[RMDB]
RNA sequence: GGGAACGACUCGAGUAGAGUCGAAAACGCGCCGUCCACCAACACCGCCACCGCAACGGCCAUCGCCAACAACACGAAUUCGGUUACUGCGGCGUCCGGUUCGGCGAUGGUCCAGGUGUAGCGGGGCGUGACCGCGAAUGUUCGCAUUCGCGGUCACAAAAGAAACAACAACAACAAC
Reactivity to DMS in 0.01 (KOAc 150mM, MgCl2 10mM, bicine 150mM(pH8.5), 24C), signal-to-noise 1, nucleotides 027 to 126: c060g000c050g020c000c110g000u000c080c100a140c160c000a080a140c180a040c070c000g000c020c010a040c000c030g000c180a040a140c230g000g000c010c000a080u000c000g080c020c060a060a170c160a000a050c240a230c300g000a000a030u020u020c030g000g010u000u000a080c060u000g000c020g040g020c050g040u010c000c020g000g020u000u000c020g000g000c020g010a020u000g000g000u020c020c040a120g000g010u000g000u000a140g000c010g050g010g000g020c170
Reactivity to 2A3 in 0.01 (KOAc 150mM, MgCl2 10mM, bicine 150mM(pH8.5), 24C), signal-to-noise 1, nucleotides 027 to 126: c080g000c000g010c010c010g040u030c000c010a130c010c030a110a090c060a090c060c000g000c000c010a020c000c010g030c090a080a050c100g000g030c000c000a000u000c000g020c030c000a060a080c030a100a010c030a110c190g110a100a010u300u300c020g070g000u070u200a060c040u090g080c050g000g000c020g000u000c010c020g040g050u000u000c000g000g040c000g000a000u000g010g000u000c000c030a080g020g000u000g020u000a040g000c010g010g010g000g000c050